[RMDB]
RNA sequence: GGGAACGACUCGAGUAGAGUCGAAAAGAUAUGGAUGUAGGGAGCUGGUGGUCGGAAACGACCAUACAGCGACGAUCUAUUGUCCUAAGUCAAAAGGUGUUUAUUGCGUUCGCGCAAUAAACACCAACCUCUUUAUCAGGUUCGCCUGAUAAAGAGGAAAAGAAACAACAACAACAAC
Reactivity to DMS in 0.01 (KOAc 150mM, MgCl2 10mM, bicine 150mM(pH8.5), 24C), signal-to-noise 3, nucleotides 027 to 126: g010a030u000a300u000g000g000a010u010g010u000a030g000g010g000a060g030c000u000g000g030u000g000g010u000c000g010g000a060a050a160c000g010a010c000c000a000u010a040c010a020g010c000g020a060c190g000a030u010c000u000a010u010u020g020u000c000c000u000a070a150g010u000c070a070a080a100a090g020g010u000g020u000u000u000a010u000u000g010c010g010u010u010c250g020c000g000c010a000a000u000a000a010a000c000a010c000c000a010a040
Reactivity to 2A3 in 0.01 (KOAc 150mM, MgCl2 10mM, bicine 150mM(pH8.5), 24C), signal-to-noise 3, nucleotides 027 to 126: g000a000u070a020u150g010g000a000u010g020u030a000g010g020g010a020g000c010u010g000g010u010g000g000u000c010g000g000a040a060a020c000g010a000c010c000a020u180a170c000a090g000c000g010a010c000g000a000u000c010u010a020u050u300g030u020c010c020u060a210a040g060u050c060a030a040a060a170g010g010u020g000u000u010u000a000u000u000g010c000g050u030u060c300g010c000g000c180a000a000u000a010a000a000c000a010c010c000a000a000
The record gives the reactivity of an RNA of 177 nucleotides to DMS and 2A3. It was measured as part of the RMDB library TTRDEL. DMS adducts were read by reverse transcription with MarathonRT. The reactions ran in a buffer of 150 mM KOAc, 10 mM MgCl2 and 150 mM bicine (pH 8.5), at 24 C.